[RMDB]
RNA sequence: GGGAACGACUCGAGUAGAGUCGAAAAGCUACGUACUUCGGUACGUAGCAAAAAACCUUUGUGCUCUCGAGGAUCGAGCGAAGAAUAGGAAAUGGCCCAUUGGGCCACCUCGGGAGAGAGGCACUCUGGUAAAAAGCAUGAAGUUCGCUUCAUGCAACUUUAAAUAUGACUUCGGUCAUAUUUAAAGAAAAGAAACAACAACAACAAC
Reactivity to DMS in 0.01 (KOAc 150mM, MgCl2 10mM, bicine 150mM(pH8.5), 24C), signal-to-noise 2, nucleotides 027 to 156: g000c000u000a020c020g030u000a010c000u010u000c270g050g020u010a000c010g010u010a000g060c000a010a010a050a060a030a030c020c020u010u000u000g020u000g010c010u000c000u010c010g040a040g000g010a110u020c040g000a220g030c050g000a180a140g000a120a100u000a140g000g010a070a050a110u000g020g040c030c020c010a300u000u000g040g020g020c000c000a010c020c000u000c000g010g010g000a070g010a070g020a020g020g040c000a110c050u000c030u020g020g000u000a020a070a100a160a150g000c000a010u000g000a020a020g010u000u010c260g030c000u010u010c000a000u000g010c010a000a040
Reactivity to 2A3 in 0.01 (KOAc 150mM, MgCl2 10mM, bicine 150mM(pH8.5), 24C), signal-to-noise 2, nucleotides 027 to 156: g010c000u000a000c000g050u000a000c010u050u090c220g070g000u000a000c010g000u000a010g060c000a000a010a010a010a000a010c010c000u030u000u000g020u020g000c000u010c000u010c030g050a160g020g010a060u050c030g030a040g110c080g040a180a070g070a180a170u300a180g120g060a110a120a140u080g010g010c020c010c120a250u190u300g010g000g000c000c000a010c000c000u000c000g000g020g000a000g000a000g010a000g010g030c000a000c010u020c030u030g010g000u030a100a120a050a030a020g000c000a000u020g000a010a000g010u060u140c200g070c180u000u000c000a000u000g000c000a000a030
Chemical mapping of a 207-nucleotide RNA with DMS and 2A3. For 2A3, 2,411 sequencing reads were counted. For DMS, 4,509 sequencing reads were counted. For 2A3 the reverse transcriptase was SuperScript II with manganese.